[RMDB]
RNA sequence: GGGAACGACUCGAGUAGAGUCGAAAAGAAUUUACCCUGCAUAUGUAAUGUCAUGUUUUUAAGACCUCAGCUAUGCAGGGAUAUUGGCCUCUUCUAGGGACAUAUGGGAUGAAGGUCUCUAGUGAAAUCUACUAAAAGCCCAUGUUAGAAUAGUGAACAUAUCCUCGAUGUUCGCAUCGAGGAUAUGAAAAGAAACAACAACAACAAC
Reactivity to 2A3 in 0.01 (KOAc 150mM, MgCl2 10mM, bicine 150mM(pH8.5), 24C), signal-to-noise 2, nucleotides 027 to 156: g050a020a050u080u070u210a270c000c000c000u000g000c000a010u090a020u230g000u110a150a060u100g030u060c030a030u080g190u160u190u110u120u160a280a010g000a000c000c010u030c100a020g000c010u000a000u000g010c000a000g000g030g000a000u030a000u000u050g060g010c000c000u000c020u040u020c000u020a000g010g000g000a020c000a000u080a040u110g000g000g000a000u040g100a080a040g010g010u000c000u000c000u000a010g010u020g030a070a080a040u060c070u140a150c060u190a070a050a120a000g000c000c000c010a000u060g110u050u080a090g020a300a220u180a070g100u220g080a040a030
Reactivity to DMS in 0.01 (KOAc 150mM, MgCl2 10mM, bicine 150mM(pH8.5), 24C), signal-to-noise 1, nucleotides 027 to 156: g010a080a130u010u030u000a130c010c020c000u000g000c000a000u010a020u000g020u000a160a250u000g000u000c040a100u000g000u000u010u000u020u000a160a300g020a040c000c070u000c010a220g010c030u000a010u000g000c000a000g000g030g000a040u000a010u000u000g000g040c040c040u010c090u000u000c050u000a020g030g020g000a150c030a050u010a030u000g010g030g000a090u000g000a180a110g020g020u000c010u010c020u000a070g000u000g010a020a090a080u000c040u010a090c050u000a110a120a070a130g050c010c010c000a050u010g010u000u000a090g030a100a110u000a090g020u000g050a070a190

Structure probing data (2A3 and DMS) for a 207-nucleotide construct. The DMS profile rests on 2,174 reads. DMS adducts were read by reverse transcription with MarathonRT. Values are in units of 0.01, from 0 to 300, in steps of 10. The reactions ran in a buffer of 150 mM KOAc, 10 mM MgCl2 and 150 mM bicine (pH 8.5), at 24 C.